[RMDB]
An RNA of 207 nucleotides, treated with 2A3 and DMS and read out base by base. Source: RMDB library OK3TST, as collected in RNAgym. Values cover nucleotides 27 to 156.

RNA sequence: GGGAACGACUCGAGUAGAGUCGAAAAAAGCUGGAUGAAUCUCCAAAGCAUAAUGCUAAGUGAAAGAAGCCAGAUGUGUACAACUACAUAUUGUAUGAUUCUGUUUAUAUGAAAUCUGCAGAAAAGGCAAAUUUAUGGAGGCAAAAAGCAGAUCAGAACGUACUAUGACGUUCGCGUCAUAGUACGUAAAAGAAACAACAACAACAAC
Reactivity to 2A3 in 0.01 (KOAc 150mM, MgCl2 10mM, bicine 150mM(pH8.5), 24C), signal-to-noise 2, nucleotides 027 to 156: a000a010g050c060u010g000g030a000u010g040a040a140u040c050u020c040c030a100a120a060g020c000a050u150a260a100u230g000c030u050a100a040g050u080g170a050a030a130g020a060a000g160c040c010a010g020a050u030g070u020g020u110a020c030a050a020c130u150a060c090a040u180a070u140u090g040u050a060u070g040a060u030u020c020u020g060u070u230u100a210u040a020u090g020a060a030a080u030c030u010g000c040a020g070a070a080a010a010g020g000c000a060a000a090u080u110u020a090u210g040g000a000g000g040c000a140a000a000a000a000g000c010a000g000a020u100c010a010g020a060
Reactivity to DMS in 0.01 (KOAc 150mM, MgCl2 10mM, bicine 150mM(pH8.5), 24C), signal-to-noise 1, nucleotides 027 to 156: a040a130g040c010u000g000g000a090u000g000a150a040u000c010u000c000c030a090a130a180g000c010a160u000a070a150u020g010c010u000a110a080g020u020g000a020a220a170g050a190a230g020c000c000a040g000a050u000g010u020g000u000a300c070a090a110c110u000a010c040a060u020a170u000u000g020u000a080u000g000a210u000u000c050u010g010u000u000u000a110u000a000u000g010a100a050a020u000c040u000g020c000a150g000a070a020a140a160g000g060c040a020a050a230u090u010u000a040u050g010g010a040g030g030c080a010a070a090a070a010g020c010a040g010a120u000c000a100g000a070
Source information: For 2A3, 946 sequencing reads were counted.